About this RNA:
This 207-nucleotide RNA was probed chemically with DMS and 2A3. The DMS profile rests on 3,324 reads. For 2A3, 4,458 sequencing reads were counted. DMS adducts were read by reverse transcription with MarathonRT.
[RMDB]
RNA sequence: GGGAACGACUCGAGUAGAGUCGAAAACGCUGGGUAUGGUAGCGUGUGGUUGUCAGCUGAAGCGCGCACGGCUUGGAUUUACCACAUUGCUCCAUACCUGUGCUGAAGCGCGCACGGCAACCGAAAGGUGCGAAACAGCUGUCUUCGGACAGCUGAACAAGAAGGAUUUCUUCGGAAAUCCUUCUUGAAAAGAAACAACAACAACAAC
Reactivity to DMS in 0.01 (KOAc 150mM, MgCl2 10mM, bicine 150mM(pH8.5), 24C), signal-to-noise 2, nucleotides 027 to 156: c060g050c030u010g050g010g020u010a040u000g010g040u000a040g020c030g000u000g010u000g010g020u000u000g010u010c070a100g000c040u000g000a090a130g020c060g040c050g020c040a300c080g000g030c000u020u010g030g010a090u000u010u000a080c030c040a040c010a070u000u010g010c000u000c010c010a010u000a000c010c000u000g030u000g040c050u000g000a100a070g000c000g020c020g010c050a300c010g000g000c080a140a180c040c030g000a030a150a270g000g020u010g020c010g020a090a090a230c000a010g010c030u010g010u000c000u000u000c300g040g020a000c000a010g000c000u000g000a030a140
Reactivity to 2A3 in 0.01 (KOAc 150mM, MgCl2 10mM, bicine 150mM(pH8.5), 24C), signal-to-noise 4, nucleotides 027 to 156: c020g000c010u030g000g000g000u000a010u020g020g140u190a010g020c010g020u020g000u010g040g030u060u090g170u210c070a030g000c010u060g060a270a040g030c030g000c000g000c060a030c000g020g020c010u060u150g170g030a110u260u170u190a020c010c010a010c010a020u040u300g000c000u000c000c000a000u000a000c000c000u000g000u030g000c010u050g020a090a040g030c010g000c000g010c010a010c010g030g000c030a040a030c020c020g050a110a040a020g050g000u010g020c010g020a090a150a000c000a000g010c010u010g000u010c000u040u100c200g070g000a000c000a000g010c020u000g000a020a010